[RMDB]
RNA sequence: GGGAACGACUCGAGUAGAGUCGAAAAUUCUUAGCACCCCUUACGAAGUACGCCUAUUGUAAGAUCUCGCAGCAUCUAUGCCGCCUGUGUCGCUGCACGACCUAACCCAUUUAAAGCGAUUGGGCACGUGUCUUGGUCGAUUCGUCGACCAAGACACAAAAGAAACAACAACAACAAC
Reactivity to 2A3 in 0.01 (KOAc 150mM, MgCl2 10mM, bicine 150mM(pH8.5), 24C), signal-to-noise 2, nucleotides 027 to 126: u050u000c000u040u090a060g030c000a040c000c000c030c020u010u110a070c000g150a100a050g070u030a030c040g000c010c010u110a110u220u070g070u010a040a000g040a080u040c000u000c040g030c020a000g000c000a090u030c000u040a060u210g000c000c010g050c010c010u030g010u030g000u040c000g000c010u010g000c000a030c000g080a110c000c000u000a000a090c010c000c000a000u090u100u170a080a120a010g100c010g110a040u110u120g040g010g050c040a010c100